Source information: An RNA of 177 nucleotides, treated with DMS and 2A3 and read out base by base. The RNA was probed in 150 mM KOAc, 10 mM MgCl2 and 150 mM bicine (pH 8.5) at 24 C. The data come from the RNA Mapping Database (RMDB), library OK1LIB. The 2A3 profile rests on 901 reads. The DMS profile rests on 1,756 reads. For DMS the reverse transcriptase was MarathonRT.
[RMDB]
RNA sequence: GGGAACGACUCGAGUAGAGUCGAAAACUCUUUCACGGUUAGGUCUGUCUCUGGCAGAGCAGACGGUCAGGAGGAUGAGGUCACCAUCUUCACGAAGCCAAAGCCAAAUUCCGCCUUGUCCUGUAAACAUGGCGAGUACUUUCGAGUACUCGCCAUGAAAAGAAACAACAACAACAAC
Reactivity to DMS in 0.01 (KOAc 150mM, MgCl2 10mM, bicine 150mM(pH8.5), 24C), signal-to-noise 1, nucleotides 027 to 126: c010u000c000u000u000u000c030a060c120g050g000u000u010a070g000g010u000c000u030g000u040c000u030c040u050g000g000c070a100g000a060g020c040a020g010a050c100g000g000u000c030a160g000g000a040g040g000a040u000g000a080g010g000u000c020a070c120c000a000u020c000u040u000c050a040c070g050a100a100g000c000c010a050a170a060g010c000c070a000a070a250u020u020c040c040g000c040c000u000u010g000u000c000c000u030g060u000a080a080a170
Reactivity to 2A3 in 0.01 (KOAc 150mM, MgCl2 10mM, bicine 150mM(pH8.5), 24C), signal-to-noise 2, nucleotides 027 to 126: c030u050c000u040u140u080c130a180c070g030g010u120u100a090g010g010u030c000u000g070u060c000u000c000u020g130g000c100a010g000a000g040c010a000g010a000c020g000g000u050c020a010g070g000a020g070g000a100u000g040a070g070g130u030c000a010c050c000a000u030c010u110u110c020a090c070g080a050a000g000c010c010a070a080a000g000c020c000a000a050a090u120u000c000c000g000c050c000u000u020g070u040c000c000u020g080u190a080a010a000